[RMDB]
RNA sequence: GGGAACGACUCGAGUAGAGUCGAAAAUCAUACCGCCCCAGCGUUGACUAUAUAUAACACUUAUUUUGUGCAAAAUCUUGAUCCAAUUGGUGGUAUAGUCUUUACAGCACCGAUAACAGAUGUGCGACCGAUCGCGGUCAUUCGUGACCGCGAUCGGAAAAGAAACAACAACAACAAC
Reactivity to 2A3 in 0.01 (KOAc 150mM, MgCl2 10mM, bicine 150mM(pH8.5), 24C), signal-to-noise 1, nucleotides 027 to 126: u060c000a000u000a060c110c000g030c000c000c000c000a040g230c000g210u000u040g000a060c100u000a000u000a000u000a000u260a190a000c000a000c000u120u050a030u300u170u000u060g280u090g000c060a000a230a000a000u070c070u140u060g000a000u000c000c030a020a070u000u030g010g010u030g000g000u000a000u000a000g000u000c000u000u270u190a040c200a010g000c000a000c000c000g130a030u110a220a080c030a210g090a220u100g000u000g050c070g010a010

Source: RMDB library OK1LIB, as collected in RNAgym. Structure probing data (2A3) for a 177-nucleotide construct. For 2A3 the reverse transcriptase was SuperScript II with manganese. The 2A3 profile rests on 323 reads.